The record gives the reactivity of an RNA of 177 nucleotides to 2A3 and DMS. For DMS the reverse transcriptase was MarathonRT. 2A3 adducts were read by reverse transcription with SuperScript II with manganese. The RNA was probed in 150 mM KOAc, 10 mM MgCl2 and 150 mM bicine (pH 8.5) at 24 C. The data come from the RNA Mapping Database (RMDB), library M2PK50.

RNA sequence: GGGAACGACUCGAGUAGAGUCGAAAAGUCCCCACUUUCGAGUGGGGACAAUCAAAGUUUUGGCACUCGCAGCCCGCAGCGUUGCUGCUCCCACGCGGUGCAUAACUGCCUACUUCGGUAGGCAGAACCAAUAGUGCAUAUUCGUAUGCACUAUUGGAAAAGAAACAACAACAACAAC
Reactivity to 2A3 in 0.01 (KOAc 150mM, MgCl2 10mM, bicine 150mM(pH8.5), 24C), signal-to-noise 9, nucleotides 027 to 126: g000u000c000c010c000c000a000c010u090u100u100c250g110a000g000u010g000g000g000g000a010c020a010a010u100c030a000a040a080g050u050u110u230u240g110g000c010a010c020u200c080g000c020a030g040c010c020c030g000c010a010g000c200g220u260u300g000c010u010g000c000u040c010c010c000a010c040g000c010g010g010u010g000c000a020u090a140a090c000u000g000c000c000u000a010c000u020u070c230g090g000u000a000g000g000c000a000g000a000a020
Reactivity to DMS in 0.01 (KOAc 150mM, MgCl2 10mM, bicine 150mM(pH8.5), 24C), signal-to-noise 7, nucleotides 027 to 126: g000u000c000c000c000c000a010c000u010u000u000c140g010a010g050u000g000g000g020g010a000c000a010a040u010c140a090a100a120g010u000u000u010u000g010g010c010a010c010u010c030g030c020a150g000c040c040c060g020c020a010g010c010g020u000u010g020c010u000g000c000u000c010c010c030a160c180g010c030g000g010u000g000c010a080u010a060a190c000u000g000c000c000u000a000c000u000u010c180g020g010u000a000g000g010c000a000g000a030a140